Overview:
Structure probing data (DMS and 2A3) for a 177-nucleotide construct. Reactivities are rounded to 0.1 and cut off at 0 and 3. 2A3 adducts were read by reverse transcription with SuperScript II with manganese. The reactions ran in a buffer of 150 mM KOAc, 10 mM MgCl2 and 150 mM bicine (pH 8.5), at 24 C.

RNA sequence: GGGAACGACUCGAGUAGAGUCGAAAAAAGAUAUGGAAUCCAUGCAUGGGAUCAGGGUCGAAGAACUUCGAUCGGAAACGAUCGAAGGGAGACCCUGAAUCUCUGUGAUGUGGAUUCCUAAGUCAAACAAUAUCCCUUUGUUCGCAAAGGGAUAUUGAAAAGAAACAACAACAACAAC
Reactivity to DMS in 0.01 (KOAc 150mM, MgCl2 10mM, bicine 150mM(pH8.5), 24C), signal-to-noise 4, nucleotides 027 to 126: a120a100g010a050u010a300u010g000g010a020a010u000c000c000a020u000g010c020a040u010g000g000g000a030u000c000a020g020g010g010u000c000g020a140a190g000a170a210c000u000u000c000g010a010u010c000g000g000a110a110a190c000g010a010u000c000g000a010a010g000g000g000a070g010a010c000c000c000u000g000a020a030u000c010u010c010u010g040u010g010a090u000g020u000g000g000a020u000u000c000c000u010a010a080g000u000c050a120a100a230
Reactivity to 2A3 in 0.01 (KOAc 150mM, MgCl2 10mM, bicine 150mM(pH8.5), 24C), signal-to-noise 2, nucleotides 027 to 126: a010a010g090a050u130a070u170g000g000a000a020u000c010c000a010u020g030c000a030u070g060g000g000a000u010c010a000g030g000g010u020c020g200a300a040g020a040a010c000u000u010c010g010a000u000c020g010g000a080a050a020c000g010a000u000c000g000a010a000g000g010g000a000g010a000c000c010c000u000g000a010a000u000c010u010c010u010g020u010g010a300u090g010u020g000g000a000u010u000c000c000u000a070a020g010u000c050a090a040a080